[RMDB]
RNA sequence: GGGAACGACUCGAGUAGAGUCGAAAAGCACGGAGACAUGCACGGAAACGUUGACGGAGGCACCAUGACGAACGUGGCUGUCCGAGGCCUCCGUAUUUGACUGGUAAUUCAGUCGUUAGGACAGCUAACGGCAUCACGACUUCGGUCGUGAUGCCGUAAAAGAAACAACAACAACAAC
Reactivity to DMS in 0.01 (KOAc 150mM, MgCl2 10mM, bicine 150mM(pH8.5), 24C), signal-to-noise 1, nucleotides 027 to 126: g050c040a010c030g020g010a060g010a160c080a100u000g030c100a060c080g050g020a060a100a020c140g110u000u030g000a000c050g000g000a010g000g000c020a120c160c070a120u000g000a090c200g000a040a060c100g010u030g000g030c030u010g000u000c000c010g010a130g010g000c000c000u000c000c020g010u000a010u030u020u000g000a010c000u010g000g020u010a110a080u000u010c030a030g010u080c000g000u010u000a130g000g020a020c000a060g020c020u010a010
Reactivity to 2A3 in 0.01 (KOAc 150mM, MgCl2 10mM, bicine 150mM(pH8.5), 24C), signal-to-noise 1, nucleotides 027 to 126: g040c020a010c060g020g000a050g000a030c060a010u090g000c000a000c140g020g040a030a030a010c070g060u080u250g060a000c000g000g000a000g030g000c040a010c050c060a100u110g060a020c090g050a300a040c020g080u050g030g030c000u000g050u000c000c030g040a090g100g000c000c000u000c000c000g000u020a020u030u080u130g020a000c000u000g000g040u080a070a080u020u140c000a010g020u030c010g010u050u150a000g020g000a000c010a000g000c020u020a050
An RNA of 177 nucleotides, treated with DMS and 2A3 and read out base by base. Source: RMDB library OK2TRN, as collected in RNAgym. For 2A3, 1,193 sequencing reads were counted. Reactivities are rounded to 0.1 and cut off at 0 and 3.